[RMDB]
RNA sequence: GGGAACGACUCGAGUAGAGUCGAAAAGAAGGUGACGAAAGACCACCUGAGGUCACAGGAAGAAAACAGUAGAUGAACUGACAUCAAAGAACGUUGAGUAGACAACGACUACAAAAGUCACCGAAAAGGGUAACAUUCACUUCGGUGAAUGUUACCCAAAAGAAACAACAACAACAAC
Reactivity to DMS in 0.01 (KOAc 150mM, MgCl2 10mM, bicine 150mM(pH8.5), 24C), signal-to-noise 2, nucleotides 027 to 126: g000a090a050g010g000u010g050a070c030g000a040a190a090g000a060c050c120a060c140c090u000g030a250g050g000u000c050a110c000a090g000g000a100a190g000a000a160a130a120c060a030g020u000a300g000a000u040g050a090a200c210u000g000a000c040a030u000c050a220a140a200g000a060a100c000g060u000u000g080a270g000u000a100g000a100c140a060a000c000g000a270c000u050a050c070a000a090a000a070g000u010c000a000c000c000g000a000a150a000a130
Reactivity to 2A3 in 0.01 (KOAc 150mM, MgCl2 10mM, bicine 150mM(pH8.5), 24C), signal-to-noise 2, nucleotides 027 to 126: g170a040a000g020g050u070g000a000c000g210a230a000a000g010a000c000c070a000c000c060u300g000a190g010g020u060c110a060c010a200g160g070a110a180g060a060a060a010a010c030a010g050u200a050g000a200u170g030a080a000c020u050g080a110c140a030u040c180a000a180a000g100a220a040c040g000u060u090g020a110g100u300a110g050a000c000a000a000c000g040a070c030u100a000c020a020a060a000a010g010u000c000a000c000c000g030a000a000a000a000